RNA sequence: GGGAACGACUCGAGUAGAGUCGAAAACGGUUAACCACCUCAAAGCUACGCGCUAAUGAUAAUAUCUUAUCAGUUAGAUUCACUGCUAACAAAAUUGUUGGUGGUGCUCCUACAUGGUUUAAUGCGUCGAGCCUAGGGUUCGCCCUAGGCAAAAGAAACAACAACAACAAC
Reactivity to 2A3 in 0.01 (KOAc 150mM, MgCl2 10mM, bicine 150mM(pH8.5), 24C), signal-to-noise 9, nucleotides 027 to 129: c020g000g000u030u040a030a040c010c010a020c020c030u110c060a100a090a020g030c030u070a040c090g050c010g000c020u050a110a030u110g060a020u020a090a060u120a130u150c130u130u050a020u030c020a050g070u040u070a020g000a080u110u110c010a010c030u010g000c000u020a010a020c000a060a110a210a300u260u130g000u000u000g010g010u010g000g000u000g000c020u030c020c000u030a070c030a180u110g030g060u050u070u150a120a040u160g050c010g040u040c080g050a020
Reactivity to DMS in 0.01 (KOAc 150mM, MgCl2 10mM, bicine 150mM(pH8.5), 24C), signal-to-noise 9, nucleotides 027 to 129: c020g020g030u010u030a060a040c000c030a100c060c020u060c070a060a070a050g060c000u000a080c090g050c100g040c050u000a060a040u000g020a010u040a040a080u060a300u060c160u030u020a020u000c020a060g030u050u030a040g010a070u050u020c000a050c040u030g030c020u000a030a050c030a050a130a110a130u090u060g020u000u010g020g040u010g030g020u040g000c290u030c030c020u050a000c130a000u050g000g050u000u000u000a020a020u080g030c020g000u030c110g000a160
Annotation
The record gives the reactivity of an RNA of 170 nucleotides to 2A3 and DMS. Conditions: 150 mM KOAc, 10 mM MgCl2 and 150 mM bicine (pH 8.5), 24 C.